[RMDB]
RNA sequence: GGGAACGACUCGAGUAGAGUCGAAAAGCGCAGGGGCUGGGGGCCCUUCCUGGCACCCUUUUGCCUGACGGACCCUGUUGCCUGCUCCUGGGCAGUGGUUUUGUUGCCUGACACAGGGCCUUUAACAAGGCCUUCAGUUUUUCGAAACUGAAGGCCUAAAAGAAACAACAACAACAAC
Reactivity to DMS in 0.01 (KOAc 150mM, MgCl2 10mM, bicine 150mM(pH8.5), 24C), signal-to-noise 1, nucleotides 027 to 126: g040c110g020c060a010g010g000g000g000c030u000g000g010g030g000g050c070c000c150u010u000c050c060u010g040g040c000a130c210c060c030u000u010u140u040g000c000c040u030g030a210c110g030g020a100c000c000c000u000g040u060u030g040c240c000u060g010c060u090c010c010u000g000g000g020c000a010g010u000g000g000u000u000u000u090g020u020u010g000c060c010u000g030a120c070a100c140a020g000g010g030c060c090u000u020u060a170a160c200a220